[RMDB]
RNA sequence: GGGAACGACUCGAGUAGAGUCGAAAAUAUGGGCAGUUCGCUGCCCAUACGAGCGGAGUCCGGCACUAUGAGCCCGCAGCGUUCGUGCGUAGCCGCGGUGCAGAGACCAAGCCUUCGGGCUUGGUAAGAUCGUGCCUACAUUCGUGUAGGCACGAUCAAAAGAAACAACAACAACAAC
Reactivity to 2A3 in 0.01 (KOAc 150mM, MgCl2 10mM, bicine 150mM(pH8.5), 24C), signal-to-noise 1, nucleotides 027 to 126: u070a010u000g020g020g000c020a030g050u080u110c160g080c120u020g020c020c000c000a000u000a000c020g040a020g010c030g020g040a060g070u000c030c000g040g020c050a020c050u120a100u220g090a040g000c000c050c050g030c030a040g030c000g120u130u160c020g060u120g090c030g040u060a040g070c040c050g000c040g030g000u090g000c010a040g020a010g030a150c010c000a000a000g000c000c050u030u030c250g030g000g000c000u010u020g010g000u010a030a000
Reactivity to DMS in 0.01 (KOAc 150mM, MgCl2 10mM, bicine 150mM(pH8.5), 24C), signal-to-noise 2, nucleotides 027 to 126: u000a000u000g000g000g040c010a010g080u000u000c210g020c020u000g020c000c010c000a010u000a000c020g000a080g020c090g010g000a120g000u000c050c000g000g030c060a050c120u000a050u000g010a140g010c010c050c050g020c030a090g000c150g000u010u010c130g000u000g000c080g000u000a120g020c020c010g030c100g020g000u010g020c050a100g020a110g000a040c010c000a000a000g030c000c000u010u010c170g040g020g020c000u000u000g000g010u020a000a030